[RMDB]
RNA sequence: GGGAACGACUCGAGUAGAGUCGAAAAACUGGGAUGGGGACGCAGACAACUUAAACACGUGACCACUGGCGUACCUAAGGGCCAGGGAAUGCUGCUGACAUGAUGGGGGUGGCGAGGCCAAGGUCCCAUUCAGAGUCAAUUUCGAUUGACUCUGAAUAAAAGAAACAACAACAACAAC
Reactivity to DMS in 0.01 (KOAc 150mM, MgCl2 10mM, bicine 150mM(pH8.5), 24C), signal-to-noise 7, nucleotides 027 to 126: a100c090u000g010g010g010a140u000g020g000g010g010a070c120g010c050a030g000a100c110a080a100c090u000u000a080a080a110c170a070c150g010u010g020a100c070c040a120c050u000g000g020c030g000u000a080c120c070u010a080a090g020g000g010c030c020a060g000g010g010a080a060u010g010c030u000g000c050u000g010a100c120a090u010g010a110u010g010g000g010g010g010u000g010g010c070g000a080g010g010c050c030a040a070g000g000u010c010c020c040
Reactivity to 2A3 in 0.01 (KOAc 150mM, MgCl2 10mM, bicine 150mM(pH8.5), 24C), signal-to-noise 3, nucleotides 027 to 126: a000c030u040g000g000g050a060u100g020g040g000g000a010c010g010c010a000g050a120c030a070a050c050u120u230a120a100a030c120a020c110g050u060g070a070c000c040a080c110u030g050g000c020g040u040a060c000c020u030a120a150g080g030g000c020c010a020g020g000g020a060a020u120g000c010u000g010c020u030g060a030c020a120u190g040a100u120g070g030g000g000g000u060g010g020c040g010a050g030g000c020c010a000a020g030g020u010c000c000c010

Structure probing data (DMS and 2A3) for a 177-nucleotide construct. Conditions: 150 mM KOAc, 10 mM MgCl2 and 150 mM bicine (pH 8.5), 24 C. For DMS, 8,176 sequencing reads were counted. It was measured as part of the RMDB library OK2TRN. High DMS reactivity at an A or C suggests that its Watson-Crick edge is free.